An RNA of 177 nucleotides, treated with 2A3 and DMS and read out base by base. For DMS, 17,452 sequencing reads were counted. For 2A3 the reverse transcriptase was SuperScript II with manganese.
[RMDB]
RNA sequence: GGGAACGACUCGAGUAGAGUCGAAAAGAUAUGGAGGAAUGGGAGCGAUAAGAGCCCACUCGGAAACGAGUGUGCUCUUUUGACGCUUAGUUCCUCCUAAGUCAAACUAAUUCGUUCGCGAAUUAGACGAUAUUGUAUACUUCGGUAUACAAUAUCGAAAAGAAACAACAACAACAAC
Reactivity to 2A3 in 0.01 (KOAc 150mM, MgCl2 10mM, bicine 150mM(pH8.5), 24C), signal-to-noise 6, nucleotides 027 to 126: g010a010u060a040u130g010g000a010g030g100a010a000u100g300g300g090a010g010c040g040a050u050a250a010g010a000g000c010c080c000a000c010u000c010g030g010a060a050a030c010g000a000g010u000g000u010g000c000u000c000u010u000u000u020g010a000c010g000c000u000u010a010g000u010u000c000c000u000c000c000u000a010a000g000u000c020a000a030a100c010u010a000a020u010u010c010g050u070u070c300g010c010g200a000a010u010u000a030g020a090
Reactivity to DMS in 0.01 (KOAc 150mM, MgCl2 10mM, bicine 150mM(pH8.5), 24C), signal-to-noise 9, nucleotides 027 to 126: g010a040u000a300u000g010g000a010g000g000a020a010u000g010g020g000a020g020c000g030a170u000a010a010g000a020g010c010c070c000a010c000u000c000g010g000a100a100a200c000g010a020g010u000g010u000g010c000u000c000u000u000u000u000g010a180c070g010c000u000u000a300g010u000u000c000c000u000c000c000u000a010a080g000u000c030a150a130a300c010u000a010a010u000u000c010g020u010u010c270g030c010g010a020a010u000u000a000g010a250